[RMDB]
RNA sequence: GGGAACGACUCGAGUAGAGUCGAAAACUUUGAACGUUCGCGUUCAAAGAAACCUCUAAGCAGAUUGGCGAGGACGACGCUGCGGAGCGCCUUUGCCAAUAAAAAGCGUAGGCUUCGGCCUACGCAAGGUAUUGGAUGUGUUCGCACAUCCAAUACCAAAAGAAACAACAACAACAAC
Reactivity to DMS in 0.01 (KOAc 150mM, MgCl2 10mM, bicine 150mM(pH8.5), 24C), signal-to-noise 2, nucleotides 027 to 126: c000u020u020u000g000a000a010c000g030u000u000c200g050c010g000u000u000c000a020a010a010g000a060a140a140c030c000u000c250u010a120a170g000c290a090g000a010u000u010g000g000c000g020a010g000g000a100c070g020a270c030g000c030u040g000c210g000g000a050g000c000g000c020c010u010u000u000g010c000c030a010a050u010a010a030a100a150a060g000c000g020u000a020g000g000c000u000u010c190g030g000c000c000u000a000c000g000c000a010a010
Reactivity to 2A3 in 0.01 (KOAc 150mM, MgCl2 10mM, bicine 150mM(pH8.5), 24C), signal-to-noise 2, nucleotides 027 to 126: c000u030u000u010g000a020a000c000g010u010u040c180g000c020g090u000u000c030a000a010a000g000a040a010a010c030c010u030c100u220a100a120g090c080a050g030a300u000u020g000g000c000g010a000g000g020a050c140g040a050c030g040c100u180g040c120g160g200a050g000c030g000c010c000u000u030u180g000c000c000a020a000u030a010a040a000a010a000g000c000g000u000a000g000g010c000u040u040c270g090g000c000c000u010a000c000g000c000a020a000